[RMDB]
RNA sequence: GGGAACGACUCGAGUAGAGUCGAAAACACAAAUUCAAUUCACAGCCUUUAAGCGUGUUCCAUAGGAGGACUAUCAUGACUGAACUAAUCUAUAAAGGUAAAGAGGAAAAAGAACUGGUUCUUCCUCCACUUGGACGGAUCAAGUUUGGCUCGACGACUGCAGGACAAUGUUCGCAUUGUCCUGCAGAAAAGAAACAACAACAACAAC
Reactivity to 2A3 in 0.01 (KOAc 150mM, MgCl2 10mM, bicine 150mM(pH8.5), 24C), signal-to-noise 1, nucleotides 027 to 156: c140a000c050a030a030a150u130u070c000a020a070u130u110c060a040c010a100g060c000c020u030u170u230a080a030g000c020g030u010g130u120u000c020c000a010u060a000g040g000a000g000g030a010c020u070a000u130c060a040u130g120a060c040u020g000a020a000c020u000a060a060u000c060u040a130u200a080a100a030g120g000u170a140a090a000g070a000g040g070a000a270a030a030a000g010a000a090c020u010g020g020u020u020c010u020u040c000c000u040c000c010a100c090u090u060g000g010a000c000g050g020a060u110c040a030a030g000u020u080u040g060g030c000u010c010g040a030c000g000a000